[RMDB]
RNA sequence: GGGAACGACUCGAGUAGAGUCGAAAAAUGGAUUGUAGGCGCCGCCCUAUACCUUGUCUGCCUCCCCGCGGUGCAUGGAGCCGGGCCACCUCGACCUGAAUGGAAGCCGGCGGCACCUCGCUAACGGGGGCAACACCAAGUUCGCUUGGUGUUGCCCAAAAGAAACAACAACAACAAC
Reactivity to 2A3 in 0.01 (KOAc 150mM, MgCl2 10mM, bicine 150mM(pH8.5), 24C), signal-to-noise 1, nucleotides 027 to 126: a030u040g060g000a020u000u260g080u150a000g060g000c010g050c070c020g000c000c020c000u150a130u000a010c000c000u000u040g040u000c180u150g080c000c020u060c060c000c000c000g000c040g000g090u260g000c060a170u100g050g000a030g000c040c000g000g000g120c000c070a140c000c040u170c030g030a220c030c050u050g030a030a000u170g040g040a010a010g090c000c000g040g010c040g000g000c000a050c080c000u000c000g000c020u170a150a000c080g000g000

Record summary: The data come from the RNA Mapping Database (RMDB), library OK1LIB. This 177-nucleotide RNA was probed chemically with 2A3. Conditions: 150 mM KOAc, 10 mM MgCl2 and 150 mM bicine (pH 8.5), 24 C. For 2A3, 399 sequencing reads were counted.